[RMDB]
RNA sequence: GGGAACGACUCGAGUAGAGUCGAAAACAGAGAGAAUCGAGAGAAAACUGGCUCUCCCUUAGCCAUCCGAGUGGACGUUCGUCCUCCUUCGGAUGCCCAGGUCGGACCGCGAGGAGGUGGAGAUGCCCCUUACCGUUUAGUUCGCUAAACGGUAAGGAAAAGAAACAACAACAACAAC
Reactivity to DMS in 0.01 (KOAc 150mM, MgCl2 10mM, bicine 150mM(pH8.5), 24C), signal-to-noise 3, nucleotides 027 to 126: c060a090g000a090g010a070g010a050a050u000c050g000a080g010a120g000a040a060a070a090c120u010g020g010c030u000c010u010c000c000c030u000u010a070g020c170c010a040u000c000c000g000a030g010u000g010g010a010c010g010u000u020c180g000u000c010c000u000c080c100u010u000c000g000g000a010u000g000c060c030c050a100g000g000u000c080g010g000a130c040c070g030c080g000a090g010g010a080g000g010u010g010g000a060g000a040u000g010c050c050